[RMDB]
RNA sequence: GGGAACGACUCGAGUAGAGUCGAAAAGAUAUGGAGUGUAUGCAUCACGAUAAGAAGCAUUCGGAAACGAAUGGCUUCUUUUGACGUGAUGUACACUCCUAAGUCAAAGUGGUCCUUCGGGACCACAGAAUGGCUAGGAGUUCGCUCCUAGCCAUUCAAAAGAAACAACAACAACAAC
Reactivity to DMS in 0.01 (KOAc 150mM, MgCl2 10mM, bicine 150mM(pH8.5), 24C), signal-to-noise 2, nucleotides 027 to 126: g010a050u010a300u010g010g000a020g000u010g020u000a090u010g000c020a010u000c020a010c000g030a120u010a020a000g010a000a000g030c010a010u000u000c010g030g000a080a100a210c000g000a000a010u010g020g000c010u000u000c010u000u000u020u000g020a190c160g000u000g010a010u000g000u010a010c020a010c010u010c010c000u000a010a060g000u000c050a090a140a200g010u000g000g000u000c000c000u000u020c280g030g000g010a000c010c000a000c000a020
Reactivity to 2A3 in 0.01 (KOAc 150mM, MgCl2 10mM, bicine 150mM(pH8.5), 24C), signal-to-noise 2, nucleotides 027 to 126: g060a020u080a040u130g020g000a020g010u030g000u040a120u250g130c020a010u000c000a010c050g100a050u080a220a000g000a010a010g020c010a010u000u020c010g000g020a090a040a040c030g020a020a020u080g100g040c000u020u000c010u010u010u020u040g230a090c070g000u000g000a000u000g000u000a010c000a000c000u000c000c000u020a100a010g030u030c050a000a050a140g010u000g000g040u010c020c000u010u070c300g130g000g000a000c000c000a000c000a000